RNA sequence: GGGAACGACUCGAGUAGAGUCGAAAAAGCACGUCGCAAUGACGUAAGGUGGGACUUUUCCCUUAAGUUCAAGCGGUUGAACUCAGAGGGGAGUGUGAUCCUGGUACCGCCGUAGAAACUGGAUUACGACGUCUACCCGGGAUUCAAACUCGGCCCCGCCAUGACUAUUGUUCGCAAUAGUCAUGGCAAAAGAAACAACAACAACAAC
Reactivity to 2A3 in 0.01 (KOAc 150mM, MgCl2 10mM, bicine 150mM(pH8.5), 24C), signal-to-noise 5, nucleotides 027 to 156: a000g120c060a020c020g010u010c010g030c160a190a260u260g020a000c010g000u060a010a060g100g040u080g010g000g040a080c030u050u040u100u150c000c010c000u010u050a040a000g000u020u000c020a030a020g090c090g210g150u030u030g010a020a010c010u010c090a080g010a040g070g010g010g010a020g000u030g040u060g010a020u050c000c030u000g020g000u020a020c010c020g000c010c000g010u020a020g100a080a230a050c150u170g070g010a060u170u040a020c030g020a010c010g020u000c030u020a030c040c040c020g000g000g010a040u150u120c050a130a110a050c030u020c030g130g000c010c000c000c020
Reactivity to DMS in 0.01 (KOAc 150mM, MgCl2 10mM, bicine 150mM(pH8.5), 24C), signal-to-noise 1, nucleotides 027 to 156: a060g030c140a120c000g060u020c000g000c120a240a130u000g000a040c020g040u000a060a070g030g000u000g020g010g000a090c070u000u000u000u020c000c000c010u000u000a030a030g030u000u000c010a040a110g040c220g050g030u000u010g020a050a030c040u010c070a030g030a090g000g000g000g010a030g020u000g030u000g030a070u010c020c010u000g050g040u000a030c070c030g030c010c010g000u010a060g000a160a150a250c100u020g020g020a300u010u000a060c000g020a050c030g020u000c030u000a060c050c040c000g010g020g000a090u000u000c180a020a040a090c040u010c010g030g010c030c000c010c060
An RNA of 207 nucleotides, treated with 2A3 and DMS and read out base by base. DMS (dimethyl sulfate) methylates the pairing face of unpaired adenines and cytosines. Values cover nucleotides 27 to 156. For 2A3 the reverse transcriptase was SuperScript II with manganese. For DMS, 2,561 sequencing reads were counted.